[RMDB]
RNA sequence: GGGAACGACUCGAGUAGAGUCGAAAAUUAAAGAACUAUGAUCUGCACUGAACAAGUCACGGUGGUCGGAAACGACGCCGAAAGGCCAGGUCAUUGUUCCGACCUGAAGACUUGACGGGUCAAAAAAGAUAUAAAUAAGGUUCGCCUUAUUUAUAUCAAAAGAAACAACAACAACAAC
Reactivity to 2A3 in 0.01 (KOAc 150mM, MgCl2 10mM, bicine 150mM(pH8.5), 24C), signal-to-noise 1, nucleotides 027 to 126: u180u120a140a070a030g000a010a000c010u010a010u040g000a010u000c000u010g010c010a010c030u020g020a110a020c000a010a010g000u000c010a000c070g000g000u010g000g010u000c000g000g010a030a030a010c000g000a000c000g000c000c000g030a050a010a000g010g000c020c000a010g020g000u000c010a000u010u020g000u010u000c020c010g010a000c000c000u030g020a110a030g010a010c000u000u000g010a010c010g000g000g000u010c000a000a030a000a010a040a060
Reactivity to DMS in 0.01 (KOAc 150mM, MgCl2 10mM, bicine 150mM(pH8.5), 24C), signal-to-noise 4, nucleotides 027 to 126: u010u020a110a070a040g000a020a030c020u000a020u000g010a020u000c000u000g020c020a030c050u010g010a080a130c010a020a010g000u000c010a300c030g000g010u000g020g010u010c000g010g000a070a080a190c010g010a000c000g020c000c000g010a030a040a120g000g000c020c090a010g000g000u000c000a020u000u000g000u010u000c000c060g000a010c000c000u000g000a070a090g020a010c000u000u000g000a300c010g000g000g000u010c010a010a040a080a080a070a100
Structure probing data (2A3 and DMS) for a 177-nucleotide construct. Conditions: 150 mM KOAc, 10 mM MgCl2 and 150 mM bicine (pH 8.5), 24 C. 2A3 adducts were read by reverse transcription with SuperScript II with manganese. Values cover nucleotides 27 to 126. The DMS profile rests on 4,895 reads. For DMS the reverse transcriptase was MarathonRT. It was measured as part of the RMDB library M2PK90.